RNA sequence: GGGAACGACUCGAGUAGAGUCGAAAAUCAUUAGUGUUAGUGUAUUUUAUGUGUGGUCCAAGACAAUUCUUCUUCUGAUGUGGCCCAGAAAAGCCAAAAGAUUGGACUCUCCUGAAUUGUCUUUAAUCCAUUUUAAUUUGGAUUUUGUAUAUGGCAAAAAUUACGUGAGUUUCGACUCACGUAAUUUAAAAGAAACAACAACAACAAC
Reactivity to 2A3 in 0.01 (KOAc 150mM, MgCl2 10mM, bicine 150mM(pH8.5), 24C), signal-to-noise 1, nucleotides 027 to 156: u050c000a020u110u120a010g000u030g050u090u030a070g010u040g030u100a140u040u130u040u050a100u110g100u000g050u070g040g000u030c070c010a020a000g050a030c050a030a060u000u020c000u050u020c040u060u010c020u010g040a100u060g080u070g060g000c000c010c000a020g080a040a080a000a010g000c030c030a040a040a040a040g120a070u040u070g010g000a020c030u100c000u020c080c000u050g060a180a110u050u010g000u000c000u000u090u060a000a000u000c010c010a030u040u040u040u200a180a300u060u030u030g010g000a000u020u050u070u160g040u010a090u070a040u220g030g000c030a030a030
Reactivity to DMS in 0.01 (KOAc 150mM, MgCl2 10mM, bicine 150mM(pH8.5), 24C), signal-to-noise 1, nucleotides 027 to 156: u010c030a100u000u020a090g030u000g020u010u000a080g030u000g000u000a090u000u000u000u010a040u030g020u000g050u000g010g000u000c040c070a060a050g000a040c020a010a090u000u000c010u000u000c040u010u000c060u010g020a110u040g050u000g000g070c000c000c020a300g000a050a080a100a090g000c030c030a010a080a130a130g000a170u000u000g010g000a070c230u000c040u000c020c080u000g000a030a070u000u000g000u000c010u010u000u000a050a020u000c000c000a010u010u010u000u000a020a190u000u000u000g020g020a070u000u000u000u000g010u020a120u000a100u010g000g020c060a040a110